About this RNA: Conditions: 150 mM KOAc, 10 mM MgCl2 and 150 mM bicine (pH 8.5), 24 C. An RNA of 177 nucleotides, treated with 2A3 and DMS and read out base by base.

[RMDB]
RNA sequence: GGGAACGACUCGAGUAGAGUCGAAAAAACAAGAAUAAUUUUAUCAAGAUGAGUUGCCAUUGUCAACAAUUUGACAAGAAAAAUAUGCUAAUUUCAUCAUAUUUCUCGUUUUUUUACUAUAUCUUUAAUCAUGAGCAUUAUUCGUAAUGCUCAUGAUAAAAGAAACAACAACAACAAC
Reactivity to 2A3 in 0.01 (KOAc 150mM, MgCl2 10mM, bicine 150mM(pH8.5), 24C), signal-to-noise 9, nucleotides 027 to 126: a000a000c050a040a000g020a030a020u130a110a080u080u170u180u260a230u220c090a130a040g000a010u010g000a010g040u020u010g010c040c030a070u030u010g010u000c000a000a030c040a200a230u110u060u060g010a000c000a000a000g210a060a100a040a020a030u190a070u180g010c030u070a060a060u210u300u060c000a000u000c010a020u030a080u100u040u010c000u000c000g000u000u000u010u010u010u020u030a040c050u060a080u090a090u240c010u020u010u020a030
Reactivity to DMS in 0.01 (KOAc 150mM, MgCl2 10mM, bicine 150mM(pH8.5), 24C), signal-to-noise 2, nucleotides 027 to 126: a030a000c020a060a020g010a010a010u010a080a150u030u010u030u020a120u070c120a090a140g000a010u000g010a020g010u000u000g000c040c170a060u000u030g020u010c020a000a050c300a130a120u000u000u000g000a030c000a040a050g000a010a070a040a100a070u030a040u040g000c000u030a050a050u000u000u010c010a000u000c000a180u000a020u000u000u000c000u000c060g000u010u000u000u000u040u000u030a120c090u000a100u010a100u000c000u000u000u000a090